[RMDB]
RNA sequence: GGGAACGACUCGAGUAGAGUCGAAAAGAUCACCUGUUCGCAGGUGAUCAAUCACCCACUUGAUCGAAGUCUCACAGCCUCGUUGCCCACGAGGCACGGGCGUAUUGAUCCGCUUCGGCGGAUCAAAGGUGACUAGUUCAUUCGUGAACUAGUCACCAAAAGAAACAACAACAACAAC
Reactivity to 2A3 in 0.01 (KOAc 150mM, MgCl2 10mM, bicine 150mM(pH8.5), 24C), signal-to-noise 2, nucleotides 027 to 126: g000a010u000c000a010c000c010u010g050u040u040c280g000c060a010g020g000u000g000a000u000c000a000a000u000c010a000c000c000c000a010c060u060u190g090a130u090c090g040a140a040g110u040c020u040c020a080c030a060g020c000c000u120c090g050u150u110g060c050c020c010a160c110g000a190g000g050c000a010c000g010g000g010c020g020u000a020u010u080g000a000u000c010c000g000c000u060u020c250g150g000c010g020g000a000u020c030a000a000a000
Reactivity to DMS in 0.01 (KOAc 150mM, MgCl2 10mM, bicine 150mM(pH8.5), 24C), signal-to-noise 2, nucleotides 027 to 126: g010a000u000c000a000c000c000u000g030u030u010c220g030c000a020g000g010u000g000a000u020c000a020a120u000c180a130c000c020c000a110c080u010u010g060a090u000c020g000a090a150g000u000c010u010c110a200c230a140g020c010c000u000c040g040u020u020g030c040c040c060a180c200g000a150g000g000c030a020c070g010g000g000c040g010u010a030u000u010g010a020u000c000c000g010c010u000u000c140g010g020c010g000g000a000u000c000a000a020a070